[RMDB]
RNA sequence: GGGAACGACUCGAGUAGAGUCGAAAAACUAGGAGCGCACAUCUCUCUAAGACUGUACGACAGUCUGUCUCUCUAGCACGCUUGUUCAACGAGAGAGUGAGAGCGUUGGAACAAGUGUGCAACGAAAAUAUCCCAUAACGUUCGCGUUAUGGGAUAUAAAAGAAACAACAACAACAAC
Reactivity to DMS in 0.01 (KOAc 150mM, MgCl2 10mM, bicine 150mM(pH8.5), 24C), signal-to-noise 7, nucleotides 027 to 126: a110c160u000a080g010g010a060g000c090g000c090a080c080a080u010c020u000c020u010c040u000a100a080g010a010c000u000g010u000a080c140g010a300c300a010g000u000c000u000g010u000c040u000c020u010c050u000a260g010c000a010c010g010c010u000u000g010u000u000c000a020a020c030g000a060g000a120g010a140g010u010g000a070g010a120g000c030g000u000u000g010g010a020a010c020a010a010g010u000g010u000g000c000a040a030c240g000a060a030a080
Reactivity to 2A3 in 0.01 (KOAc 150mM, MgCl2 10mM, bicine 150mM(pH8.5), 24C), signal-to-noise 5, nucleotides 027 to 126: a010c060u080a050g000g030a030g020c030g050c060a030c020a190u070c030u010c000u000c010u050a060a020g010a010c010u040g110u180a050c060g070a040c080a010g000u000c010u030g030u000c070u000c010u000c020u040a010g010c000a000c010g000c000u010u000g010u020u000c000a000a020c010g000a010g010a020g000a060g170u120g100a150g020a010g040c010g010u010u020g140g020a030a000c000a000a000g000u010g000u000g000c000a010a000c060g040a010a060a040

Chemical mapping of a 177-nucleotide RNA with DMS and 2A3. The RNA was probed in 150 mM KOAc, 10 mM MgCl2 and 150 mM bicine (pH 8.5) at 24 C. For 2A3 the reverse transcriptase was SuperScript II with manganese.